The data come from the RNA Mapping Database (RMDB), library OK2TRN. The record gives the reactivity of an RNA of 177 nucleotides to DMS and 2A3. For DMS, 2,194 sequencing reads were counted. The reactions ran in a buffer of 150 mM KOAc, 10 mM MgCl2 and 150 mM bicine (pH 8.5), at 24 C. Reactivities are given for positions 27 through 126.
RNA sequence: GGGAACGACUCGAGUAGAGUCGAAAAUGUACCAUAUCCAUCAGGGAAUUUAAUGCUAUUCAACAUGCGAGAUGAUGAUGUCACGCUUGAGAUAUCUAGUCACCUUAGGUAUGCUAGCCUCUGCUACAAUCAUUCGGUGAUUCGUCACCGAAUGAUUAAAAGAAACAACAACAACAAC
Reactivity to DMS in 0.01 (KOAc 150mM, MgCl2 10mM, bicine 150mM(pH8.5), 24C), signal-to-noise 3, nucleotides 027 to 126: u030g020u000a130c040c020a040u010a060u000c040c040a080u000c100a090g000g010g010a070a050u000u010u000a070a110u020g010c060u000a100u010u010c040a060a070c060a030u000g010c110g010a050g000a060u000g010a130u000g020a050u020g000u000c020a040c070g010c150u000u000g000a100g020a030u000a030u000c040u000a130g010u010c070a060c100c080u010u000a040g000g030u000a050u000g040c070u000a050g000c030c030u010c050u000g010c120u000a060c190
Reactivity to 2A3 in 0.01 (KOAc 150mM, MgCl2 10mM, bicine 150mM(pH8.5), 24C), signal-to-noise 3, nucleotides 027 to 126: u100g030u010a020c000c000a000u000a040u120c060c020a060u060c110a080g080g000g080a050a030u120u100u160a210a060u210g060c040u060a060u180u160c040a070a050c020a060u100g000c040g030a040g030a100u130g010a040u110g010a020u100g010u030c020a050c120g030c030u040u090g030a040g010a080u070a030u030c020u020a020g060u070c030a050c030c040u060u050a020g040g000u030a000u070g010c000u020a030g020c020c000u000c020u000g030c000u040a040c060